Annotation:
An RNA of 207 nucleotides, treated with 2A3 and read out base by base. 2A3 adducts were read by reverse transcription with SuperScript II with manganese. The reactions ran in a buffer of 150 mM KOAc, 10 mM MgCl2 and 150 mM bicine (pH 8.5), at 24 C. It was measured as part of the RMDB library M2RFPK.
[RMDB]
RNA sequence: GGGAACGACUCGAGUAGAGUCGAAAAGAAUUGGUAUGUAAGCUACUUCUUCCAGUACCUGCGUCAUAACAUCAAGGUUAUGCAUACUGAGCCGAAGCUCAGCUUCGGUCCUCCAAGGAAGACCAAAUACAGCUCAGCCCGUUCGCGGGCUGAGCAAGUUAUACCGGGUGUUCGCACCCGGUAUAACAAAAGAAACAACAACAACAAC
Reactivity to 2A3 in 0.01 (KOAc 150mM, MgCl2 10mM, bicine 150mM(pH8.5), 24C), signal-to-noise 1, nucleotides 027 to 156: g050a000a050u030u040g010g000u000a000u030g000u000a010a010g010c000u010a020c000u040u250c000u000u030c010c000a000g000u010a010c000c020u000g020c010g020u000c020a000u000a000a010c010a070u230c120a110a040g300g000u000u000a000u010g000c020a000u000a000c000u020g000a000g010c000c000g000a000a000g010c010u050c300a030g010c000u010u010c000g010g000u000c000c010u080c040c020a040a070g000g000a000a010g000a010c040c060a000a090a000u130a070c040a050g000c000u010c010a000g000c000c000c000g120u090u050c090g030c010g060g000g030c010u040g000a000g010c000a000a000